This 177-nucleotide RNA was probed chemically with 2A3 and DMS. The RNA was probed in 150 mM KOAc, 10 mM MgCl2 and 150 mM bicine (pH 8.5) at 24 C. The DMS profile rests on 3,103 reads. DMS adducts were read by reverse transcription with MarathonRT. For 2A3 the reverse transcriptase was SuperScript II with manganese.

RNA sequence: GGGAACGACUCGAGUAGAGUCGAAAAAACAUUGGCAAUGCCCUUUUCUCAUGCUUGGUUGCUGUCUGGUAUUAUUCGACAGCUUGUAAUAGUAUCCGUAUAUGCCUACCCUACGCAACUGGGCGUAUCGAUAAGUCAAGUUCGCUUGACUUAUCGAAAAAGAAACAACAACAACAAC
Reactivity to 2A3 in 0.01 (KOAc 150mM, MgCl2 10mM, bicine 150mM(pH8.5), 24C), signal-to-noise 2, nucleotides 027 to 126: a000a000c100a090u100u050g020g020c080a110a080u180g010c000c000c080u070u040u000u000c010u000c010a050u060g000c010u000u030g030g050u050u020g010c020u030g020u080c040u050g010g010u070a070u180u000a020u070u090c010g040a030c060a110g010c020u010u040g040u070a080a080u050a100g050u010a050u060c060c030g010u010a030u000a010u100g030c000c000u030a070c050c000c000u010a010c040g000c010a010a060c060u050g000g040g010c020g000u010a060
Reactivity to DMS in 0.01 (KOAc 150mM, MgCl2 10mM, bicine 150mM(pH8.5), 24C), signal-to-noise 3, nucleotides 027 to 126: a050a030c120a050u010u000g010g000c040a140a080u000g010c020c010c050u000u000u000u000c010u010c060a050u000g030c010u000u000g000g010u000u000g010c010u000g000u010c130u010g020g010u010a030u010u000a080u010u000c030g010a050c120a100g020c030u000u000g000u000a040a080u000a040g020u000a090u010c120c040g010u010a060u010a030u000g000c050c050u000a090c080c080c060u000a040c150g000c020a020a050c100u000g010g000g000c010g020u010a090